[RMDB]
RNA sequence: GGGAACGACUCGAGUAGAGUCGAAAACGUGCGUACUGGGCCGCCGGCACAAUGUUCCACCCAGCCGUCUCAGAGGUCGCGGUUCGACUACGAUCAGCCAGCUGGUCAGCGGGGUCCUCCUAGCUAGAUUACUAGCUGAGUUCGCUCAGCUAGUAAUAAAAGAAACAACAACAACAAC
Reactivity to 2A3 in 0.01 (KOAc 150mM, MgCl2 10mM, bicine 150mM(pH8.5), 24C), signal-to-noise 2, nucleotides 027 to 126: c010g020u020g000c030g120u140a050c030u050g020g000g010c050c030g060c010c040g030g000c030a030c050a140a210u220g030u100u040c020c000a050c030c010c000a010g000c000c010g080u010c030u010c060a060g020a080g050g090u070c020g000c020g030g000u010u050c020g000a010c020u130a060c110g040a040u030c010a000g040c060c030a070g100c040u010g010g010u030c020a040g070c050g040g020g000g010u020c020c010u000c010c000u020a100g010c020u050a020g010
Reactivity to DMS in 0.01 (KOAc 150mM, MgCl2 10mM, bicine 150mM(pH8.5), 24C), signal-to-noise 5, nucleotides 027 to 126: c080g010u000g020c080g020u000a050c060u000g000g000g000c080c130g000c060c040g000g010c050a080c130a090a080u010g010u010u000c050c030a130c190c020c020a120g000c040c040g010u000c030u000c040a070g010a120g000g010u010c040g020c030g010g000u000u000c040g000a060c030u000a070c090g010a040u000c020a060g010c080c120a120g020c020u000g010g000u010c030a120g010c040g010g000g010g000u000c020c050u000c010c020u010a080g010c130u010a090g010